[RMDB]
RNA sequence: GGGAACGACUCGAGUAGAGUCGAAAAGAAACAGGAUCGACAAGGGUGUAAAGAUCGCUCUUUUACUCGGCAUGAUACCACCGUUAUCGGAUCAACAGAGUAGUUGCAAAUGACAACAAUGCUCAGGAAGGGGUAGCACCGUUCGCGGUGCUACCAAGAGACAACUUAGAUUCGUCUAAGUUGUCUCAAAAGAAACAACAACAACAAC
Reactivity to 2A3 in 0.01 (KOAc 150mM, MgCl2 10mM, bicine 150mM(pH8.5), 24C), signal-to-noise 9, nucleotides 027 to 156: g020a000a120a020c070a070g060g070a050u070c040g040a040c090a100a110g090g060g050u110g030u140a100a120a020g060a060u080c020g030c040u020c020u020u080u030u060a080c050u030c020g000g010c010a010u070g000a000u030a050c000c010a010c000c010g080u060u070a020u060c060g000g010a000u010c000a000a030c050a020g010a000g010u060a010g020u010u010g030c040a070a210a300u210g080a140c000a020a000c000a020a110u120g000c010u010c020a020g060g090a040a070g040g050g000g000u000a000g000c000a000c010c000g020u030u030c120g000c010g080g000u000g000c000u000a000c000c000a000a000
Reactivity to DMS in 0.01 (KOAc 150mM, MgCl2 10mM, bicine 150mM(pH8.5), 24C), signal-to-noise 3, nucleotides 027 to 156: g000a070a080a110c080a090g020g020a050u000c020g000a060c080a120a060g010g020g020u020g040u010a060a170a120g030a110u010c040g020c040u000c020u000u000u000u010a140c040u000c000g010g000c000a100u010g000a050u000a100c030c000a130c020c010g030u000u010a060u000c120g020g000a060u000c010a160a080c040a150g000a040g030u000a060g040u000u010g000c020a080a100a210u000g000a150c010a030a030c010a040a060u010g010c020u000c010a080g000g020a070a090g000g030g000g050u010a010g000c020a020c000c030g020u010u000c300g070c030g040g010u000g030c010u000a010c010c000a020a030